Source: RMDB library OK2TST, as collected in RNAgym. An RNA of 177 nucleotides, treated with 2A3 and DMS and read out base by base. In probing experiments dimethyl sulfate is read out at A N1 and C N3, which are open when not base-paired. For DMS the reverse transcriptase was MarathonRT. For DMS, 3,062 sequencing reads were counted. For 2A3, 3,612 sequencing reads were counted.
[RMDB]
RNA sequence: GGGAACGACUCGAGUAGAGUCGAAAAUCAUAGACGAGUGCCACAUGCUGGACAUAGAGGCCUUCUCCUUCCUCGCGAGGGCGAUGGAAGGCGAGCUAGCUCCGAUACUUAUCCUCGCGACGAACAGACCACUAGGUGAUUUCGAUCACCUAGUGGUAAAAGAAACAACAACAACAAC
Reactivity to 2A3 in 0.01 (KOAc 150mM, MgCl2 10mM, bicine 150mM(pH8.5), 24C), signal-to-noise 2, nucleotides 027 to 126: u060c020a020u080a040g060a030c030g020a020g040u090g060c030c010a080c040a080u100g040c060u090g040g000a050c020a030u120a070g100a070g020g030c000c010u050u000c000u020c000c000u020u000c000c010u010c000g000c010g060a120g010g170g010c020g010a020u130g000g020a020a000g020g010c000g000a010g020c030u030a010g020c010u020c020c010g050a050u060a160c010u090u090a060u040c000c000u030c000g010c000g030a050c020g030a070a030c010a040g080
Reactivity to DMS in 0.01 (KOAc 150mM, MgCl2 10mM, bicine 150mM(pH8.5), 24C), signal-to-noise 4, nucleotides 027 to 126: u020c080a110u010a080g010a130c070g000a070g020u000g000c020c040a090c080a100u010g000c030u000g010g000a090c070a090u000a070g020a120g020g010c040c070u000u010c010u000c020c040u000u000c000c020u000c010g000c010g000a160g000g020g020c120g000a030u010g000g030a060a040g000g010c130g000a030g000c060u000a070g010c020u000c040c020g000a150u000a050c080u010u000a120u000c030c020u010c060g020c050g010a070c110g020a050a100c210a060g010